Structure probing data (DMS and 2A3) for a 207-nucleotide construct. It was measured as part of the RMDB library RNAMAK. For 2A3, 6,891 sequencing reads were counted. The reactions ran in a buffer of 150 mM KOAc, 10 mM MgCl2 and 150 mM bicine (pH 8.5), at 24 C.
[RMDB]
RNA sequence: GGGAACGACUCGAGUAGAGUCGAAAAUCAUGCCUUCGGGCAUGAAAAAAAGCGUACUACAACGAGGGUAAGGGAGAUCUGAUUCCCAAAUAGGAAUCGAUCGAGGAUCUUACCUCCCCACCGUUGUAUCGCAAAAAUAGUGACUUCGGUCACUAAAGUACAUUCUAGAGUUCGCUCUAGAAUGUACAAAAGAAACAACAACAACAAC
Reactivity to DMS in 0.01 (KOAc 150mM, MgCl2 10mM, bicine 150mM(pH8.5), 24C), signal-to-noise 2, nucleotides 027 to 156: u000c010a040u000g000c000c000u000u000c300g070g040g020c000a000u000g000a010a010a010a060a090a110a160g000c000g010u000a030c080u000a050c000a020a010c000g000a300g020g000g020u000a010a010g010g010g060a090g010a020u010c020u010g040a020u000u000c000c000c010a020a100a150u010a040g000g000a030a010u000c000g010a140u000c000g020a150g030g000a030u000c010u000u000a060c020c020u000c220c070c010c080a300c080c000g000u010u000g000u000a020u000c000g030c000a020a030a080a060a120u000a020g030u000g000a020c000u000u000c300g050g000u000c010a010c000u000a020a040a110
Reactivity to 2A3 in 0.01 (KOAc 150mM, MgCl2 10mM, bicine 150mM(pH8.5), 24C), signal-to-noise 5, nucleotides 027 to 156: u030c000a000u000g000c000c000u040u060c160g010g000g020c030a020u020g030a060a000a010a000a000a000a010g020c030g020u070a070c030u010a010c010a000a000c010g010a010g020g010g000u030a020a020g020g030g000a010g000a000u010c030u160g010a010u060u010c030c000c000a110a140a030u210a050g000g000a000a000u010c010g040a020u100c090g070a210g030g000a000u010c000u010u010a070c000c000u010c010c010c010c010a070c010c010g000u000u000g000u010a020u300c010g000c000a000a010a060a050a070u070a000g000u020g010a000c000u030u020c290g090g000u000c000a000c000u020a010a020a010